[RMDB]
RNA sequence: GGGAACGACUCGAGUAGAGUCGAAAAGAUAUGGAGAACUACAGCCGCCCUCGCACUCGGAAACGAGUGAACUACGAGUAACAAGCUGCUCCUAAGUCAAACGUAAGUUUGUUCGCAAACUUACGAACGUGUGUGAUAUCUUCGGAUAUCACACACGAAAAGAAACAACAACAACAAC
Reactivity to DMS in 0.01 (KOAc 150mM, MgCl2 10mM, bicine 150mM(pH8.5), 24C), signal-to-noise 2, nucleotides 027 to 126: g000a020u010a290u030g000g000a010g000a240a040c090u010a280c000a040g000c000c020g000c300c110c000u000c010g040c040a010c000u000c010g020g000a120a070a140c020g010a010g000u010g000a010a030c160u040a250c000g000a010g000u000a110a160c140a110a080g030c050u020g000c060u000c030c000u000a060a110g000u020c020a050a130a230c000g010u000a000a000g000u010u000u000g000u010u010c300g000c010a000a000a000c000u000u000a000c000g010a010a110
Reactivity to 2A3 in 0.01 (KOAc 150mM, MgCl2 10mM, bicine 150mM(pH8.5), 24C), signal-to-noise 2, nucleotides 027 to 126: g020a000u040a000u210g020g030a020g000a100a110c130u140a050c300a010g010c020c000g000c010c050c000u000c000g010c000a020c000u000c000g010g040a030a050a050c010g000a000g000u030g000a010a010c060u130a020c070g020a000g080u150a060a120c080a070a060g020c000u020g030c000u020c010c000u010a110a060g040u060c050a070a050a050c030g000u000a010a000g000u010u010u010g040u070u080c240g040c110a000a000a020c000u000u000a000c000g020a040a020